[RMDB]
Background
Source: RMDB library RFMREP, as collected in RNAgym. Structure probing data (DMS and 2A3) for a 177-nucleotide construct. Values are in units of 0.01, from 0 to 300, in steps of 10. The RNA was probed in 150 mM KOAc, 10 mM MgCl2 and 150 mM bicine (pH 8.5) at 24 C. DMS (dimethyl sulfate) methylates the pairing face of unpaired adenines and cytosines.
RNA sequence: GGGAACGACUCGAGUAGAGUCGAAAAAGCGAUUUUGCCAUCUUUAAUACCAAUAUCCGCUUUAUAAAUACCGGUGUAAUCCACGAUUAAAGCGUUAGUGAUAAUCAAAUCCAGUUCUUCUUUGCUACAGGUAUGUAUACUUCGGUAUACAUACCUGAAAAGAAACAACAACAACAAC
Reactivity to DMS in 0.01 (KOAc 150mM, MgCl2 10mM, bicine 150mM(pH8.5), 24C), signal-to-noise 2, nucleotides 027 to 126: a050g000c110g020a060u000u000u000u000g020c080c050a080u000c060u000u000u010a070a090u000a090c240c020a090a030u000a080u020c060c060g000c020u000u000u020a060u000a100a070a090u010a100c100c060g030g000u000g020u010a040a090u010c120c040a040c110g010a080u010u000a010a070a150g010c050g000u010u010a010g020u010g000a190u000a020a040u000c050a030a060a110u000c030c020a110g000u000u000c100u010u000c070u000u000u000g010c120u000a170
Reactivity to 2A3 in 0.01 (KOAc 150mM, MgCl2 10mM, bicine 150mM(pH8.5), 24C), signal-to-noise 2, nucleotides 027 to 126: a040g000c030g020a000u040u060u090u110g020c010c030a060u060c070u060u190u170a150a030u060a130c030c040a020a010u010a010u050c030c000g020c040u030u070u100a070u030a110a110a070u190a110c060c060g020g030u060g050u080a060a070u020c040c020a050c070g030a040u030u030a040a030a000g010c010g000u030u040a040g050u070g060a000u070a090a030u070c040a030a040a030u020c040c000a040g040u070u020c030u080u000c010u080u080u100g050c020u040a050